[RMDB]
Record summary:
An RNA of 177 nucleotides, treated with 2A3 and DMS and read out base by base.
RNA sequence: GGGAACGACUCGAGUAGAGUCGAAAAGGCCUGGGCAACGGUUCGGUGUACAAGAUGAUCCCCUCGGUCUUCGAGGCGCUCAGCCACCGGAACCAGAUCACCGAAUUCGAGCGACGCCGCUGGUCACACCAUUAUCGGAUUUCGAUCCGAUAAUGGUAAAAGAAACAACAACAACAAC
Reactivity to 2A3 in 0.01 (KOAc 150mM, MgCl2 10mM, bicine 150mM(pH8.5), 24C), signal-to-noise 9, nucleotides 027 to 126: g030g020c010c010u010g000g010g020c030a100a080c050g020g000u020u010c010g000g000u030g030u070a120c090a100a080g050a160u140g020a050u070c040c020c010c000u030c020g080g050u070c070u110u100c050g020a010g010g000c030g010c080u120c120a030g010c010c000a050c050c000g030g020a020a020c010c000a020g020a070u070c030a010c020c010g030a020a030u250u300c050g030a090g080c060g030a060c080g010c020c010g050c040u030g000g020u020c030a020c010
Reactivity to DMS in 0.01 (KOAc 150mM, MgCl2 10mM, bicine 150mM(pH8.5), 24C), signal-to-noise 4, nucleotides 027 to 126: g020g010c000c000u010g000g000g000c000a120a180c120g000g010u020u000c020g000g000u020g020u020a090c280a110a120g000a130u010g000a060u000c010c160c000c060u000c070g000g000u040c140u020u000c010g010a130g000g020c240g010c180u020c040a100g020c090c010a060c070c020g000g000a020a030c030c010a110g010a070u010c040a040c010c020g000a100a030u010u040c050g010a110g020c070g020a070c140g000c020c020g000c030u000g000g000u010c040a140c170

For DMS, 8,116 sequencing reads were counted. Source: RMDB library OK1LIB, as collected in RNAgym.